This 207-nucleotide RNA was probed chemically with DMS and 2A3. The RNA was probed in 150 mM KOAc, 10 mM MgCl2 and 150 mM bicine (pH 8.5) at 24 C. For 2A3, 790 sequencing reads were counted. It was measured as part of the RMDB library OK3TST. For DMS, 2,246 sequencing reads were counted. DMS adducts were read by reverse transcription with MarathonRT.

RNA sequence: GGGAACGACUCGAGUAGAGUCGAAAAGACGUUUAGAAUGCUGGUAUGUGUUUACUCCCAGAACGAUUUCGCCACUCUCUAGUAAAUUGCUCUUGACUCUGCGAUAGAGCAAUGCAGACGACAAGGUGUUUUCUGAGGGACGGUCUCCCUGCCGGAGGCCGUAGUGUCCAUUCGUGGACACUACGGCAAAAGAAACAACAACAACAAC
Reactivity to DMS in 0.01 (KOAc 150mM, MgCl2 10mM, bicine 150mM(pH8.5), 24C), signal-to-noise 1, nucleotides 027 to 156: g000a170c050g020u000u010u000a120g000a060a070u020g020c000u000g000g010u000a060u010g010u000g000u000u020u000a100c030u000c090c000c010a120g000a000a050c120g010a180u000u000u000c060g020c010c010a150c070u000c050u000c020u000a090g050u010a060a050a060u000u010g010c010u000c030u000u010g010a270c030u010c110u000g030c070g000a300u000a060g010a000g030c000a020a020u010g000c050a020g010a030c080g000a080c070a040a110g030g020u000g040u010u000u000u000c020u010g000a090g010g020g000a030c040g020g030u000c020u000c000c010c010u000g000c090c010g010g000a100g020
Reactivity to 2A3 in 0.01 (KOAc 150mM, MgCl2 10mM, bicine 150mM(pH8.5), 24C), signal-to-noise 1, nucleotides 027 to 156: g060a000c070g000u060u090u140a220g030a140a020u090g050c020u060g050g010u150a130u070g080u040g030u010u050u060a070c020u010c000c000c020a020g030a020a040c070g060a090u020u030u130c030g000c010c000a040c000u020c000u000c000u000a060g000u040a180a130a090u030u010g000c000u000c000u040u090g080a110c010u080c220u300g160c210g050a040u050a070g080a050g050c030a010a010u030g000c000a000g000a080c150g020a020c100a190a120g000g040u000g000u000u000u040u030c050u110g010a090g020g010g000a000c000g020g040u000c030u010c020c000c000u040g000c030c050g040g010a070g110